[RMDB]
RNA sequence: GGGAACGACUCGAGUAGAGUCGAAAACUCGAGGAGCAUAGAGGCGUGCGAACUCGACAUGAAUCAGCCUCGAUUAGAAGGUACUCGUGAGAGCGAAGUACCGAGAAUUGGUCGACGAUCACCGGCGAUCUUCCGACCUUGAAUUAAGCCGGCAAAAAUUAUGGAUGAUAUUCGUAUCAUCCAUAAUAAAAGAAACAACAACAACAAC
Reactivity to DMS in 0.01 (KOAc 150mM, MgCl2 10mM, bicine 150mM(pH8.5), 24C), signal-to-noise 4, nucleotides 027 to 156: c060u000c010g010a050g000g020a240g000c040a080u000a070g020a050g030g020c010g040u020g020c040g010a100a190c060u000c010g020a100c070a090u010g000a110a060u010c060a140g040c010c000u000c010g030a130u000u000a100g020a100a130g020g010u000a000c000u010c010g030u010g010a300g000a280g040c010g010a080a110g010u000a010c000c000g000a070g010a120a130u000u010g020g010u000c030g030a050c070g010a130u000c060a080c030c030g010g020c030g020a080u000c030u010u000c040c010g000a040c030c010u000u020g010a070a140u010u000a060a080g010c000c000g030g020c090a030a040a070a070
Reactivity to 2A3 in 0.01 (KOAc 150mM, MgCl2 10mM, bicine 150mM(pH8.5), 24C), signal-to-noise 5, nucleotides 027 to 156: c030u010c000g000a000g000g020a090g000c000a020u050a060g010a010g010g000c000g000u000g000c020g060a100a030c000u020c010g060a040c070a150u300g100a130a100u130c060a060g000c000c000u000c000g010a110u150u130a040g080a170a040g000g000u000a010c000u000c000g010u020g040a080g000a000g040c010g030a140a020g000u000a000c000c020g000a010g030a010a150u190u130g000g000u000c000g000a010c030g000a010u010c010a010c070c000g000g000c000g000a000u010c000u040u020c090c020g000a010c010c000u040u120g030a020a020u110u090a060a000g000c000c000g010g000c020a060a090a020a040
Chemical mapping of a 207-nucleotide RNA with DMS and 2A3. For DMS, 7,619 sequencing reads were counted. The reactions ran in a buffer of 150 mM KOAc, 10 mM MgCl2 and 150 mM bicine (pH 8.5), at 24 C. The data come from the RNA Mapping Database (RMDB), library OK3TST. For DMS the reverse transcriptase was MarathonRT.